The record gives the reactivity of an RNA of 177 nucleotides to 2A3 and DMS.
RNA sequence: GGGAACGACUCGAGUAGAGUCGAAAAGCUCAUACCAGUAUCUCGCCUGUGUAUAAUCCAGUGGUUUACCGUCGCUACCAUGAAGAUAAAAUUCUCCAAGGCGAUAUUGCGACGUUGAGUGACCAUACCGACUAGUAUAGUUCGCUAUACUAGUCGGAAAAGAAACAACAACAACAAC
Reactivity to 2A3 in 0.01 (KOAc 150mM, MgCl2 10mM, bicine 150mM(pH8.5), 24C), signal-to-noise 6, nucleotides 027 to 126: g020c010u010c020a040u090a130c020c030a020g040u040a040u030c080u030c020g030c000c010u090g010u020g040u140a040u070a210a060u040c020c020a020g020u020g050g020u040u060u090a090c030c020g050u050c050g000c040u010a000c010c000a020u030g010a020a010g010a010u110a080a270a060a080u190u050c050u010c060c020a030a000g020g000c010g020a020u020a030u040u050g010c000g000a050c020g030u030u040g030a030g020u050g030a040c000c000a010u050a090
Reactivity to DMS in 0.01 (KOAc 150mM, MgCl2 10mM, bicine 150mM(pH8.5), 24C), signal-to-noise 5, nucleotides 027 to 126: g000c040u000c020a040u000a090c100c050a080g010u000a040u000c080u000c070g010c060c010u000g000u010g000u010a070u000a080a050u000c050c040a240g020u000g010g010u000u000u000a070c070c040g000u010c030g010c050u000a050c010c010a070u000g000a060a120g000a030u000a050a070a120a140u010u000c040u000c070c060a060a040g010g010c080g010a030u000a020u000u000g000c040g010a050c100g010u000u010g000a070g020u000g020a150c020c010a100u000a140
For 2A3 the reverse transcriptase was SuperScript II with manganese. Values cover nucleotides 27 to 126.